[RMDB]
RNA sequence: GGGAACGACUCGAGUAGAGUCGAAAAGCAGGGAACGCUGCGCGCUUGGAGCGGCUGGGCCGUCGCCCUGCGCUGGGUCAACGCGGCCGCCCGCGCAGUCGGGAUGGGCCACCCCGCAGGUGCGGACGUGCACAUGUUGGUUCGCCAACAUGUGCACAAAAGAAACAACAACAACAAC
Reactivity to DMS in 0.01 (KOAc 150mM, MgCl2 10mM, bicine 150mM(pH8.5), 24C), signal-to-noise 1, nucleotides 027 to 126: g000c040a070g020g000g030a170a040c060g000c050u000g000c040g030c090g000c110u000u000g010g000a170g020c050g000g000c040u000g020g000g030c050c040g000u000c060g000c000c010c010u000g000c030g000c240u000g090g000g040u010c240a060a080c190g030c150g020g010c000c010g000c010c000c000g000c000g020c200a090g000u020c010g000g000g000a040u010g010g020g000c000c000a130c030c000c000c020g030c050a020g000g010u000g040c010g020g010a070c080
Reactivity to 2A3 in 0.01 (KOAc 150mM, MgCl2 10mM, bicine 150mM(pH8.5), 24C), signal-to-noise 1, nucleotides 027 to 126: g000c020a050g030g000g090a010a140c090g000c080u060g000c030g020c010g020c030u110u160g030g010a110g040c050g010g000c070u020g040g050g100c080c010g080u060c050g090c020c000c020u020g040c010g000c070u030g030g000g000u070c100a100a030c090g030c050g110g000c020c000g060c000c000c000g000c000g050c070a040g050u120c000g000g000g070a110u130g070g000g040c000c000a010c000c000c000c030g070c020a040g000g060u170g090c030g050g030a050c080
An RNA of 177 nucleotides, treated with DMS and 2A3 and read out base by base. DMS adducts were read by reverse transcription with MarathonRT. Values cover nucleotides 27 to 126. As a SHAPE reagent, 2A3 marks flexible, mostly unpaired nucleotides at the ribose 2'-OH. The reactions ran in a buffer of 150 mM KOAc, 10 mM MgCl2 and 150 mM bicine (pH 8.5), at 24 C.